Background
The record gives the reactivity of an RNA of 177 nucleotides to 2A3. Values cover nucleotides 27 to 126. It was measured as part of the RMDB library OK1LIB.
RNA sequence: GGGAACGACUCGAGUAGAGUCGAAAACACGGAUCGACCGUGGCCGCACACGACCACAGGAGGUGAUGAGGUUCCUAUGCGUCCAUACGAAAUCAUGGUCAUCCUCGACCCGACCCUCGACGAACGCGGGCGCGUAUGCUUUCGAGCAUACGCGCCCAAAAGAAACAACAACAACAAC
Reactivity to 2A3 in 0.01 (KOAc 150mM, MgCl2 10mM, bicine 150mM(pH8.5), 24C), signal-to-noise 1, nucleotides 027 to 126: c070a000c000g020g020a060u150c050g090a060c000c000g000u000g030g000c000c030g000c000a030c000a000c000g040a040c000c000a060c100a130g040g100a080g010g130u110g000a160u060g000a040g210g140u040u030c020c000u040a020u010g030c020g030u130c020c000a060u020a040c050g150a000a150a060u100c040a000u040g000g020u010c000a000u010c000c010u050c000g040a060c020c020c000g010a030c040c000c000u000c080g000a080c080g000a190a050c010g000c000